[RMDB]
The record gives the reactivity of an RNA of 207 nucleotides to 2A3. The reactions ran in a buffer of 150 mM KOAc, 10 mM MgCl2 and 150 mM bicine (pH 8.5), at 24 C. Source: RMDB library RNAMAK, as collected in RNAgym. Reactivities are given for positions 27 through 156.
RNA sequence: GGGAACGACUCGAGUAGAGUCGAAAACCGUAGGUUCGAUAAGUGUGUGCACUCAUCGAUCCUGUGAUACAUUCUUUCAGAUUGGAUUUCGAAAGAGAUCCAAUCUGAAAGAAUGUAUCACAGGGGAGAGUGGCACACUUUUGACGAACCUAAACGGGCUAAUUACGUAGUUCGCUACGUAAUUAGCAAAAGAAACAACAACAACAAC
Reactivity to 2A3 in 0.01 (KOAc 150mM, MgCl2 10mM, bicine 150mM(pH8.5), 24C), signal-to-noise 2, nucleotides 027 to 156: c000c000g010u010a010g000g000u010u000c010g020a050u020a050a010g000u000g010u020g020u200g300c010a010c010u050c010a200u300c070g010a010u020c010c000u010g000u010g000a010u000a000c000a000u010u000c000u000u000u000c000a000g000a000u010u000g010g000a000u000u000u020c030g040a090a060a040g000a000g000a000u000c000c000a000a000u000c000u000g000a000a000a000g000a000a000u000g000u000a000u000c000a000c010a000g000g000g000g010a010g000a000g000u010g000g000c000a000c000a000c000u030u000u010u020g010a030c010g000a000a000c000c000u000a020a020a000c010g060g080